[RMDB]
RNA sequence: GGGAACGACUCGAGUAGAGUCGAAAAGACGAGAGUAUUGCGGCAGCUCAAAGGCGGAAAGAUAAAAACUGCGCACAACAACAAUAUAGUUGACCCGCCAACACGAAGCGAGAUCGUGAAGGUAGAACCUCCGAUUAGCGUUCGCGCUAAUCGGAGGAAAAGAAACAACAACAACAAC
Reactivity to 2A3 in 0.01 (KOAc 150mM, MgCl2 10mM, bicine 150mM(pH8.5), 24C), signal-to-noise 1, nucleotides 027 to 126: g000a000c110g020a000g030a010g040u080a150u000u230g000c000g090g000c070a020g000c000u030c050a070a000a000g000g000c010g020g010a150a020a000g090a090u010a000a130a080a000a000c040u000g010c030g030c000a030c040a070a070c020a000a000c000a000a210u110a000u040a170g000u050u040g050a030c010c010c000g000c000c000a000a000c000a000c040g000a000a000g060c000g060a020g060a290u030c000g000u000g050a050a000g000g050u030a000g030a080a030
The record gives the reactivity of an RNA of 177 nucleotides to 2A3. The reactions ran in a buffer of 150 mM KOAc, 10 mM MgCl2 and 150 mM bicine (pH 8.5), at 24 C.